[RMDB]
RNA sequence: GGGAACGACUCGAGUAGAGUCGAAAAUCAACUAAUAAUCUGUGCUGAUGCUAAGUCUCUUUGCAGGACUUGGGCUUCUAGGGGAAAAAGAGGCCAAUAAAGAGCCCCUUUCUAGCACAGGAAUGGGGAAUGAGUCUCUAUUCGUAGAGACUCAUUCAAAAGAAACAACAACAACAAC
Reactivity to 2A3 in 0.01 (KOAc 150mM, MgCl2 10mM, bicine 150mM(pH8.5), 24C), signal-to-noise 2, nucleotides 027 to 126: u060c000a010a050c040u150a070a200u110a110a060u190c010u010g000u000g000c010u050g000a050u050g000c010u020a030a000g010u030c030u010c000u180u250u280g130c180a060g010g040a010c000u030u040g100g030g020c010u000u030c020u090a060g000g020g000g040a000a100a020a110a000g060a050g060g000c020c030a040a060u270a170a120a020g090a020g010c000c010c010c030u000u000u050c020u040a000g010c000a000c000a010g020g020a010a040u120g030g060g050
Reactivity to DMS in 0.01 (KOAc 150mM, MgCl2 10mM, bicine 150mM(pH8.5), 24C), signal-to-noise 3, nucleotides 027 to 126: u010c060a090a140c060u010a080a110u000a100a130u000c010u000g000u000g000c000u000g000a060u000g020c030u010a030a020g000u000c000u000c040u000u010u020g020c230a140g010g000a010c000u000u000g010g050g010c010u000u000c040u010a140g020g000g000g020a100a090a040a030a060g010a050g000g020c010c040a040a100u020a050a110a150g010a180g020c010c020c030c020u000u000u010c040u010a040g020c030a000c010a020g000g000a060a060u000g000g000g000
Structure probing data (2A3 and DMS) for a 177-nucleotide construct. Source: RMDB library OK2TRN, as collected in RNAgym. For DMS the reverse transcriptase was MarathonRT. The reactions ran in a buffer of 150 mM KOAc, 10 mM MgCl2 and 150 mM bicine (pH 8.5), at 24 C. The DMS profile rests on 2,939 reads.